[RMDB]
RNA sequence: GGGAACGACUCGAGUAGAGUCGAAAAGCUGGCCGCUCAGACCGCGCAGACCGAUCCGGCGGUGCGAAGCAUUCUGGCCAACGCGGCACCGACUGCCGAUCAGGUCAACGCCACGUUCAGCGACGUGUCCUAUCCUCCCCUUCGGGGGAGGAUAGGAAAAAGAAACAACAACAACAAC
Reactivity to DMS in 0.01 (KOAc 150mM, MgCl2 10mM, bicine 150mM(pH8.5), 24C), signal-to-noise 2, nucleotides 027 to 126: g010c080u000g000g070c040c000g030c040u010c110a110g010a080c080c100g010c000g160c210a160g000a000c030c030g000a070u050c100c060g000g010c050g000g000u040g000c000g000a170a050g020c060a210u080u050c150u050g000g000c010c070a020a100c250g000c000g000g050c000a080c030c040g000a140c090u000g000c160c150g010a060u070c020a150g000g000u020c010a050a090c170g020c090c120a020c000g000u000u040c060a020g000c080g000a040c010g030u090g010
Reactivity to 2A3 in 0.01 (KOAc 150mM, MgCl2 10mM, bicine 150mM(pH8.5), 24C), signal-to-noise 2, nucleotides 027 to 126: g060c010u030g030g030c010c000g020c110u130c050a070g080a250c020c060g000c010g000c050a020g000a010c000c010g000a020u050c070c040g000g030c000g010g040u050g000c010g140a090a000g030c000a050u170u130c090u150g040g010c000c010a020a020c080g050c010g050g000c000a020c000c010g170a260c080u060g020c060c010g000a020u010c030a120g010g030u010c000a030a000c050g000c020c060a040c020g060u040u030c010a010g050c010g040a030c010g100u090g030